[RMDB]
RNA sequence: GGGAACGACUCGAGUAGAGUCGAAAACGGAGAAGAGCGCCCCCUAUGCGGAAGCCGCGCUGGAACGCGGCAGGGAGCUGGCAAGCACCGCAGCGGAGAAAGGUGCCCCGCUGGCCGAGGCGGCACGCGUACUGCAUGGAUUCGUCCAUGCAGUACGAAAAGAAACAACAACAACAAC
Reactivity to DMS in 0.01 (KOAc 150mM, MgCl2 10mM, bicine 150mM(pH8.5), 24C), signal-to-noise 6, nucleotides 027 to 126: c040g000g010a150g000a070a050g000a120g010c070g020c040c020c030c020c050u020a110u010g010c040g010g020a160a100g020c010c010g010c010g030c020u010g030g030a130a180c030g010c010g010g020c010a080g000g000g000a130g000c010u010g000g000c120a110a070g000c030a200c030c000g010c020a060g000c080g000g010a110g000a070a050a120g000g000u020g010c030c030c010c020g000c020u000g020g010c040c050g000a130g000g010c080g000g000c020a040c100g000
Reactivity to 2A3 in 0.01 (KOAc 150mM, MgCl2 10mM, bicine 150mM(pH8.5), 24C), signal-to-noise 8, nucleotides 027 to 126: c050g030g040a090g030a170a020g030a030g030c030g030c000c000c000c000c010u040a070u140g030c030g040g040a080a030g000c010c010g020c010g020c080u190g070g100a100a020c010g000c000g020g000c020a010g040g030g010a080g000c010u010g070g020c060a080a040g010c010a020c040c020g000c020a020g020c030g030g030a070g090a090a100a010g030g000u020g000c000c000c000c010g020c030u040g040g010c010c020g010a030g010g020c040g010g000c020a000c040g020

Structure probing data (DMS and 2A3) for a 177-nucleotide construct. It was measured as part of the RMDB library OK1LIB. Values cover nucleotides 27 to 126. The RNA was probed in 150 mM KOAc, 10 mM MgCl2 and 150 mM bicine (pH 8.5) at 24 C. The 2A3 profile rests on 12,914 reads. DMS adducts were read by reverse transcription with MarathonRT. For DMS, 14,138 sequencing reads were counted.